[RMDB]
RNA sequence: GGGAACGACUCGAGUAGAGUCGAAAACGUUUAUACGAAAAACUACUAGACAUCGUAUUGCGAUUAUCGGGUUACUUAUUUUAGUCUACAUGCUGACAUUAUCAAUUGUGUCACAAUUUACAUUUGAUGACGGUGCUACUUUCGAGUAGCACCGUCAAAAAGAAACAACAACAACAAC
Reactivity to 2A3 in 0.01 (KOAc 150mM, MgCl2 10mM, bicine 150mM(pH8.5), 24C), signal-to-noise 1, nucleotides 027 to 126: c000g070u000u290u120a000u000a050c050g000a000a000a000a170a000c000u070a050c020u030a030g270a190c040a020u030c030g120u000a200u020u000g000c000g120a120u050u030a290u190c000g020g000g020u020u100a170c000u030u010a000u270u020u160u190a000g000u000c080u000a140c000a190u000g060c000u000g070a000c000a000u040u110a170u250c110a100a080u000u070g020u000g020u090c000a000c120a000a000u070u080u180a200c140a170u100u000u000g160a090